[RMDB]
RNA sequence: GGGAACGACUCGAGUAGAGUCGAAAAUAGUUUGGCAGCUUAAUGCCAACCUGUUAUCAUUUGUGACCUACAACAUUUGAUAACGGUCAUUUUAGUAGGAUAUACUCUACCAGAGCCCACUUGUAGAGCGAAUUUAAGGGCUUAGCUUAGUGUGUCUCUGUUUACACCUGUUCGCAGGUGUAAACAGAAAAGAAACAACAACAACAAC
Reactivity to 2A3 in 0.01 (KOAc 150mM, MgCl2 10mM, bicine 150mM(pH8.5), 24C), signal-to-noise 1, nucleotides 027 to 156: u220a000g040u010u010u030g010g000c000a020g000c080u210u300a080a010u030g000c000c000a000a000c000c000u020g010u000u010a010u000c000a020u000u000u020g000u010g020a010c010c010u010a020c030a000a000c000a020u000u000u000g000a000u010a000a000c040g030g010u090c040a070u000u040u210u170a040g010u010a000g000g000a000u000a000u000a020c000u000c000u000a020c010c010a000g030a120g010c000c000c000a090c010u000u000g000u000a020g000a020g020c000g000a000a020u120u170u200a190a270g000g000g000c020u100u160a050g040c040u140u120a060g040u070g020u010g030u090c010u000